RNA sequence: GGGAACGACUCGAGUAGAGUCGAAAAACGUCGUGCUGGCUUACGAGCCAGCACGACGAUCUGUACCUCAGCUUUGCUCCCAACCAACCACUUCCACAUGUUUUGCUGGUAGAGCUGAGGACAGCAAUUCUUGAAACAGGUUCGCCUGUUUCAAGAAAAAAGAAACAACAACAACAAC
Reactivity to 2A3 in 0.01 (KOAc 150mM, MgCl2 10mM, bicine 150mM(pH8.5), 24C), signal-to-noise 1, nucleotides 027 to 126: a000c040g000u000c020g000u000g000c070u030g010g020c000u050u080a150c250g090a010g000c010c020a000g000c000a000c000g020a000c000g000a000u010c000u020g000u190a300c010c000u040c000a000g000c000u000u020u080g010c020u080c020c000c040a020a030c060c020a050a040c040c000a050c040u180u120c080c020a070c030a220u100g050u020u090u050u260g080c030u030g010g010u010a010g010a000g090c000u000g000a000g000g000a000c010a000g000c000a000a180